Structure probing data (2A3 and DMS) for a 207-nucleotide construct.
For DMS, 3,406 sequencing reads were counted.
Values cover nucleotides 27 to 156.
The reactions ran in a buffer of 150 mM KOAc, 10 mM MgCl2 and 150 mM bicine (pH 8.5), at 24 C.
DMS adducts were read by reverse transcription with MarathonRT.
RNA sequence: GGGAACGACUCGAGUAGAGUCGAAAAGUCACGCACAGGGCAAACCAUUCGAAAGAGUGGGACGCAAAGCCUCCGGCCUAAACCAGAAGACAUGGUAGGUAGCGGGGUUACCGAUGGCAAAAUGAAAGAGAAGUAGUGACUUCGGUCACUACUUCUCGACAAUUAUGAACUUCGGUUCAUAAUUGUCAAAAGAAACAACAACAACAAC
Reactivity to 2A3 in 0.01 (KOAc 150mM, MgCl2 10mM, bicine 150mM(pH8.5), 24C), signal-to-noise 7, nucleotides 027 to 156: g010u010c010a000c040g040c010a100c040a100g060g040g000c000a010a010a010c000c000a000u010u000c000g010a010a010a010g000a010g010u000g000g020g000a000c010g000c020a020a000a000g010c000c000u000c010c000g010g010c010c000u040a060a050a050c000c000a030g060a250a050g140a280c100a160u030g020g000u010a010g000g000u000a000g010c010g000g010g000g000u010u020a020c020c000g100a140u020g020g000c010a040a050a010a110u270g070a120a110a060g000a000g000a000a000g000u010a000g000u000g000a000c000u010u040c170g020g000u000c000a000c000u000a000c000u000u000c000u000c000
Reactivity to DMS in 0.01 (KOAc 150mM, MgCl2 10mM, bicine 150mM(pH8.5), 24C), signal-to-noise 2, nucleotides 027 to 156: g000u000c020a070c010g010c040a150c050a130g010g040g000c030a200a100a140c010c020a010u000u000c010g010a140a060a170g020a030g020u000g000g040g000a060c050g000c040a080a060a090g010c000c000u000c010c030g010g040c000c020u000a060a100a080c020c020a090g010a120a080g000a130c070a050u000g010g030u000a030g030g030u000a020g010c020g020g010g020g020u000u020a010c030c000g000a040u000g020g000c000a070a070a040a110u010g030a130a090a130g030a010g000a030a000g020u000a010g020u000g020a040c000u000u000c200g070g010u000c010a000c010u000a000c000u000u000c000u010c000